[RMDB]
RNA sequence: GGGAACGACUCGAGUAGAGUCGAAAACCGAUGAUUUAAAAUUGAAAGCUCGCCUCAUUCGCAUGGGGCCUGCUCUAAGGUGGGCCAGCUAAAAGCGACAUUGCAAAUGUGGAAUGUGAGAGUGGUAGUAUCUAAGACUGUUCGCAGUCUUAGAUACAAAAGAAACAACAACAACAAC
Reactivity to 2A3 in 0.01 (KOAc 150mM, MgCl2 10mM, bicine 150mM(pH8.5), 24C), signal-to-noise 2, nucleotides 027 to 126: c000c010g020a100u150g130a100u060u240u300a120a220a160a190u080u160g090a200a080a000g000c010u000c020g030c010c000u010c000a010u040u020c010g010c030a020u010g010g040g130g000c000c000u010g000c010u060c070u080a110a020g030g000u000g010g000g000c010c000a030g020c070u050a040a080a030a180g000c030g070a070c050a060u080u210g010c020a000a010a050u070g000u070g080g050a050a060u120g040u050g040a070g000a010g010u020g000g010u030a070
Reactivity to DMS in 0.01 (KOAc 150mM, MgCl2 10mM, bicine 150mM(pH8.5), 24C), signal-to-noise 2, nucleotides 027 to 126: c010c000g020a120u020g020a100u000u000u010a030a040a100a140u010u020g000a110a170a220g000c000u000c080g040c040c010u000c000a010u000u000c080g010c030a020u010g010g000g010g000c010c010u000g010c000u000c150u010a130a100g000g020u000g000g000g000c000c000a170g010c020u000a050a070a080a300g010c020g000a170c030a020u020u010g070c010a020a010a010u000g000u000g000g010a060a010u010g000u010g010a160g000a030g020u000g010g000u000a140